RNA sequence: GGGAACGACUCGAGUAGAGUCGAAAAUCUUUUCUCCCUGCAAGGCCGGAGUAGAAGUCAGGUCCACGCUUCAGAGUGAAGGUUCUCAGACAAUUGCAUGGGAAACCCAGCGAAUGCUGGAUUAUGCAAUUAGAAACCUCUUCGGAGGUUUCUAAUUAAAAGAAACAACAACAACAAC
Reactivity to 2A3 in 0.01 (KOAc 150mM, MgCl2 10mM, bicine 150mM(pH8.5), 24C), signal-to-noise 4, nucleotides 027 to 126: u020c010u060u060u090u010c010u030c000c000c000u000g040c030a090a090g030g010c000c000g070g050a060g020u180a050g050a160a000g130u090c060a010g060g020u000c050c000a030c050g030c000u080u060c040a080g020a030g120u080g040a060a020g050g020u130u050c010u000c010a060g030a130c040a040a090u120u040g000c000a010u080g030g000g120a050a010a020c000c010c000a000g000c020g170a250a110u300g000c000u010g000g020a010u040u010a040u100g010c000
Reactivity to DMS in 0.01 (KOAc 150mM, MgCl2 10mM, bicine 150mM(pH8.5), 24C), signal-to-noise 5, nucleotides 027 to 126: u020c030u020u000u010u000c040u000c000c060c060u000g010c050a150a250g000g020c030c040g000g000a060g000u020a100g030a110a130g000u030c040a090g010g000u030c000c040a070c220g000c020u000u010c300a130g000a070g000u020g000a060a020g020g010u000u000c000u000c030a120g000a130c190a090a080u010u010g000c010a020u010g000g030g020a100a080a130c170c000c000a000g000c000g020a140a030u040g010c000u000g000g000a050u000u010a010u010g010c030
This 177-nucleotide RNA was probed chemically with 2A3 and DMS. For DMS the reverse transcriptase was MarathonRT. The RNA was probed in 150 mM KOAc, 10 mM MgCl2 and 150 mM bicine (pH 8.5) at 24 C. 2A3 adducts were read by reverse transcription with SuperScript II with manganese. It was measured as part of the RMDB library OK1LIB.